This 177-nucleotide RNA was probed chemically with 2A3 and DMS. The 2A3 profile rests on 25,720 reads. The RNA was probed in 150 mM KOAc, 10 mM MgCl2 and 150 mM bicine (pH 8.5) at 24 C.

RNA sequence: GGGAACGACUCGAGUAGAGUCGAAAAGAUAUGGACGCAGCUAUGAAGGUACGUAACAUCAUCUCGGAAACGAGAUGUGGUACUGGAGCUGUAGUCCUAAGUCAAAACCUCCCCUUCGGGGGAGGAACUAUUACGAUAACUUCGGUUAUCGUAAUAGAAAAGAAACAACAACAACAAC
Reactivity to 2A3 in 0.01 (KOAc 150mM, MgCl2 10mM, bicine 150mM(pH8.5), 24C), signal-to-noise 8, nucleotides 027 to 126: g020a030u090a020u110g000g000a000c010g000c000a000g000c000u080a300u300g040a050a010g040g010u020a010c020g060u130a070a150c040a190u300c000a010u000c020u000c000g030g050a080a070a040c020g000a010g000a010u000g000u010g010g000u010a000c010u010g010g020a000g000c000u000g000u090a050g000u000c000c000u010a090a010g050u030c020a030a040a080a240c000c010u000c010c010c000c000u020u120c280g070g000g000g000g000a000g000g000a010a000
Reactivity to DMS in 0.01 (KOAc 150mM, MgCl2 10mM, bicine 150mM(pH8.5), 24C), signal-to-noise 8, nucleotides 027 to 126: g010a040u000a300u010g010g000a010c000g000c000a010g010c000u000a220u020g010a170a170g000g010u000a010c010g010u000a050a100c150a040u010c000a000u000c000u000c000g010g000a090a060a190c000g010a010g010a000u000g010u000g000g010u000a010c000u000g000g000a010g020c000u000g010u000a020g030u000c000c000u000a020a070g010u000c030a110a050a110a180c010c000u000c000c000c000c000u000u010c200g010g000g010g000g000a000g000g000a010a040